The record gives the reactivity of an RNA of 177 nucleotides to 2A3 and DMS.
The 2A3 profile rests on 820 reads.
The reactions ran in a buffer of 150 mM KOAc, 10 mM MgCl2 and 150 mM bicine (pH 8.5), at 24 C.

RNA sequence: GGGAACGACUCGAGUAGAGUCGAAAAGUAAGAUGAUUCGUCAUCUUACGAACCCGAUGAAGCGGCACAUACCGAGCUUCAUACAUCUAAGAGUGCUAAUAAUGGCGCGUGGUUUCGACCACGCGAAACACGUUGGGCGAUUCGUCGCCCAACGUGUAAAAGAAACAACAACAACAAC
Reactivity to 2A3 in 0.01 (KOAc 150mM, MgCl2 10mM, bicine 150mM(pH8.5), 24C), signal-to-noise 1, nucleotides 027 to 126: g000u000a000a000g000a000u000g000a000u040u020c070g020u010c010a010u020c000u000u000a000c000g000a020a030c000c000c000g010a010u030g010a020a010g000c020g100g000c080a000c010a230u170a080c090c050g050a050g050c000u040u000c000a010u060a040c040a060u020c070u110a080a040g100a040g090u080g100c030u050a080a090u170a160a080u210g220g090c010g010c040g000u020g040g070u000u040u120c160g110a000c010c000a010c010g000c010g000a000a000
Reactivity to DMS in 0.01 (KOAc 150mM, MgCl2 10mM, bicine 150mM(pH8.5), 24C), signal-to-noise 1, nucleotides 027 to 126: g010u000a000a000g020a000u000g010a000u000u000c190g040u000c040a020u000c000u000u000a000c000g020a090a170c000c010c010g020a050u000g000a030a040g010c000g000g050c070a020c090a040u030a030c120c130g020a090g030c000u000u000c020a020u020a050c170a050u010c200u020a100a100g010a080g040u000g000c070u000a150a070u000a100a040u000g010g040c000g020c070g010u020g000g030u000u000u020c220g060a040c000c000a010c000g000c000g040a010a050